[RMDB]
Description:
The record gives the reactivity of an RNA of 177 nucleotides to DMS and 2A3. The reactions ran in a buffer of 150 mM KOAc, 10 mM MgCl2 and 150 mM bicine (pH 8.5), at 24 C. The DMS profile rests on 3,313 reads. For DMS the reverse transcriptase was MarathonRT.

RNA sequence: GGGAACGACUCGAGUAGAGUCGAAAAGAUAUGGAUCUAAGAUCUUUGAUCUACAUGUCGGAAACGACAUAAGUAGGGAGAUCUGUCCUAAGUCAAACGUACUCUGUUGUUCGCAACAGAGUACGAAGUUGGGUAGAAUGUUCGCAUUCUACCCAACAAAAGAAACAACAACAACAAC
Reactivity to DMS in 0.01 (KOAc 150mM, MgCl2 10mM, bicine 150mM(pH8.5), 24C), signal-to-noise 3, nucleotides 027 to 126: g020a020u000a240u010g000g000a030u000c130u010a080a010g000a040u000c010u000u000u000g030a100u010c000u010a010c020a030u000g000u000c000g020g000a030a070a120c020g010a010c000a000u000a020a090g020u000a010g020g010g020a020g000a010u000c000u010g000u000c000c000u000a020a180g000u000c020a080a110a250c010g000u000a000c000u000c000u000g020u000u000g010u010u010c220g020c000a010a000c000a010g000a010g010u000a000c000g000a000a030
Reactivity to 2A3 in 0.01 (KOAc 150mM, MgCl2 10mM, bicine 150mM(pH8.5), 24C), signal-to-noise 3, nucleotides 027 to 126: g000a000u050a020u120g040g000a020u040c080u300a130a050g010a010u000c000u170u230u270g150a160u150c000u020a010c000a020u010g010u010c000g000g000a040a010a020c000g020a010c010a010u070a110a160g020u020a000g170g180g000a010g000a010u000c010u010g000u000c000c000u030a080a030g020u000c050a130a060a060c010g000u000a000c010u000c010u010g010u000u000g020u020u080c300g000c160a000a000c000a000g000a000g010u000a000c000g000a020a020